[RMDB]
RNA sequence: GGGAACGACUCGAGUAGAGUCGAAAAACCUUAGGCUCAGAAGAUUGCUACUUGCGAUGCAAGCGGUGAGUUUUUUGAGGUUUUUUGUAAAUUCCACUUCGGUGGAGUGUAUCAGGAGCUAAAACCAUCUAUCAUGUAGCUUCGGCUACAUGAUAGAAAAAGAAACAACAACAACAAC
Reactivity to DMS in 0.01 (KOAc 150mM, MgCl2 10mM, bicine 150mM(pH8.5), 24C), signal-to-noise 2, nucleotides 027 to 126: a050c010c000u000u010a090g020g020c000u000c000a080g000a060a050g020a030u000u010g000c010u000a050c020u000u000g000c010g020a200u020g020c000a000a020g010c000g000g000u000g010a020g000u010u000u000u000u000u010g000a020g000g000u000u000u000u010u000u000g010u010a040a100a040u010u010c000c000a020c010u000u020c170g060g010u000g000g000a040g020u000g010u000a080u000c080a090g000g000a030g000c030u010a070a060a070a120c080c080a200
Reactivity to 2A3 in 0.01 (KOAc 150mM, MgCl2 10mM, bicine 150mM(pH8.5), 24C), signal-to-noise 1, nucleotides 027 to 126: a000c020c000u030u190a150g030g000c000u000c000a000g010a070a000g030a140u040u050g010c000u010a030c010u010u000g000c060g300a230u300g000c010a000a020g000c000g030g000u100g100a050g020u050u020u000u000u030u040g010a010g020g030u000u040u000u030u020u060g020u010a070a000a050u010u030c010c000a020c000u040u070c180g090g010u000g030g000a020g020u030g020u000a030u130c000a020g010g090a020g000c020u140a140a060a010a090c020c000a070
The record gives the reactivity of an RNA of 177 nucleotides to DMS and 2A3. It was measured as part of the RMDB library RFMREP. The reactions ran in a buffer of 150 mM KOAc, 10 mM MgCl2 and 150 mM bicine (pH 8.5), at 24 C. Reactivities are given for positions 27 through 126.